The data come from the RNA Mapping Database (RMDB), library OK1LIB. Structure probing data (2A3 and DMS) for a 177-nucleotide construct. Values cover nucleotides 27 to 126. Conditions: 150 mM KOAc, 10 mM MgCl2 and 150 mM bicine (pH 8.5), 24 C.

RNA sequence: GGGAACGACUCGAGUAGAGUCGAAAAAGUGCUGGCUAGUCGUAAGUGGGCUGGUGAGGUGACUGCGGGAAAUGUCGCAAGACAAUUUGAGGACCGUCUCCUUGACGGAGAACGGCCUACUUAGGUGCACCUACUACUACUUCGGUAGUAGUAGGUGAAAAGAAACAACAACAACAAC
Reactivity to 2A3 in 0.01 (KOAc 150mM, MgCl2 10mM, bicine 150mM(pH8.5), 24C), signal-to-noise 4, nucleotides 027 to 126: a000g130u110g010c020u010g020g020c030u030a020g060u110c040g050u060a140a150g050u110g010g030g000c030u050g010g050u150g060a070g000g010u050g040a060c010u060g040c030g010g050g040a010a060a070u100g020u010c010g010c070a040a030g040a010c030a080a140u070u070u170g060a070g000g010a110c010c000g010u000c010u010c000c020u050u250g090a100c130g020g000a000g010a030a010c010g000g000c000c000u070a110c030u050u100a050g110g000u090g050
Reactivity to DMS in 0.01 (KOAc 150mM, MgCl2 10mM, bicine 150mM(pH8.5), 24C), signal-to-noise 4, nucleotides 027 to 126: a070g010u020g010c040u010g010g020c030u000a040g020u010c040g020u010a070a070g010u010g010g010g010c080u010g000g000u020g000a080g000g010u010g010a070c040u000g000c050g020g010g000a090a030a060u000g000u000c010g000c220a070a120g010a020c040a040a080u010u000u020g000a050g010g000a140c000c010g010u000c000u000c030c010u000u030g000a130c230g010g010a010g010a010a030c020g000g020c010c000u000a010c060u000u010a040g000g020u010g010